[RMDB]
RNA sequence: GGGAACGACUCGAGUAGAGUCGAAAAGGUGCUCUGAAUGGAGUGCUCUACUGAGAUUAUGAAAUAGAAGGUAAGCUAUUAUCUCUUACAACAGGGCAGGGCUUGUUGGAAUAGGCGGUAAAGUCUAAAAACUACCUCACCUUCGGGUGAGGUAGAAGCUUGAAAUAGGGUUCGCCCUAUUUCAAGCAAAAGAAACAACAACAACAAC
Reactivity to 2A3 in 0.01 (KOAc 150mM, MgCl2 10mM, bicine 150mM(pH8.5), 24C), signal-to-noise 1, nucleotides 027 to 156: g000g000u040g000c000u000c000u000g180a250a210u160g020g040a010g000u050g010c010u000c090u050a130c090u040g040a000g020a120u000u300a100u300g110a100a060a070u110a050g020a120a010g070g000u130a050a050g040c020u000a050u120u010a060u110c030u000c000u070u080a040c040a150a000c000a070g050g000g000c030a020g000g000g000c030u050u030g000u000u000g000g000a100a070u040a040g010g000c010g050g000u090a130a110a030g020u020c070u090a010a050a050a000a000c020u000a000c000c000u000c000a000c050c000u000u000c120g100g000g000u000g030a000g000g000u000a000g000a000a000